Structure probing data (DMS and 2A3) for a 177-nucleotide construct. The RNA was probed in 150 mM KOAc, 10 mM MgCl2 and 150 mM bicine (pH 8.5) at 24 C. 2A3 adducts were read by reverse transcription with SuperScript II with manganese.
RNA sequence: GGGAACGACUCGAGUAGAGUCGAAAAGCUGGCUUAGUCUAACGACAACUGUUGCCACGUACUUAUAGGGUCGGACUCUCAUUGCAGUAGCGACUUAAUGGGUGAUUUGCUAGGAACUGCGCAGAGAAUCAUCACUGCAGUUCGCUGCAGUGAUGAUAAAAGAAACAACAACAACAAC
Reactivity to DMS in 0.01 (KOAc 150mM, MgCl2 10mM, bicine 150mM(pH8.5), 24C), signal-to-noise 3, nucleotides 027 to 126: g000c170u000g020g010c020u010u010a100g000u000c040u010a120a130c290g000a050c060a110a090c130u010g020u000u000g000c070c050a080c090g000u020a090c010u000u010a060u000a180g000g000g010u010c010g000g000a160c040u000c000u020c050a110u000u000g020c040a030g020u000a060g030c020g010a030c040u010u010a090a070u010g010g020g030u020g010a080u000u000u000g010c030u010a110g020g000a040a120c110u000g010c080g020c150a050g020a140g000a090
Reactivity to 2A3 in 0.01 (KOAc 150mM, MgCl2 10mM, bicine 150mM(pH8.5), 24C), signal-to-noise 3, nucleotides 027 to 126: g060c100u020g020g030c010u120u100a040g010u010c020u080a080a040c070g030a030c030a080a030c070u220g300u300u070g050c010c010a020c030g050u010a010c010u040u090a030u050a200g010g000g040u030c030g030g000a040c000u010c010u020c090a080u010u140g010c010a010g010u020a010g050c010g040a040c000u020u040a090a100u120g140g000g030u080g030a060u100u000u040g000c000u020a040g110g040a080a060c020u030g000c050g010c050a000g030a010g040a080